[RMDB]
RNA sequence: GGGAACGACUCGAGUAGAGUCGAAAAUGACACACCCACCUCAGAAUUGUUCGUGAGGAUCUGAGGAGAUCUCAGGAGCACAGAGUGGGUGCUUGGUGGCAGAGGUACUGCUGUUCUCUGUGCAGCACCUUGCAAAUAUGGAAGGCAGGAAGGGGAAGACCCACUAUGACUUCGGUCAUAGUGGGUCAAAAGAAACAACAACAACAAC
Reactivity to 2A3 in 0.01 (KOAc 150mM, MgCl2 10mM, bicine 150mM(pH8.5), 24C), signal-to-noise 1, nucleotides 027 to 156: u050g030a010c000a000c000a000c010c000c000a040c030c060u040c030a180g120a300a170u200u010g020u040u010c170g170u040g020a040g040g050a100u010c010u040g170a120g100g070a040g010a010u020c020u000c000a020g080g030a010g010c020a000c010a010g050a000g000u010g000g030g000u010g020c040u020u020g000g000u000g010g000c000a000g000a030g060g040u000a060c020u040g000c020u000g050u000u000c050u000c010u030g050u090g110c000a000g000c030a010c030c000u000u150g030c030a000a200a000u090a040u140g030g000a010a010g000g050c030a010g030g030a010a020g040g000g000g000a140a030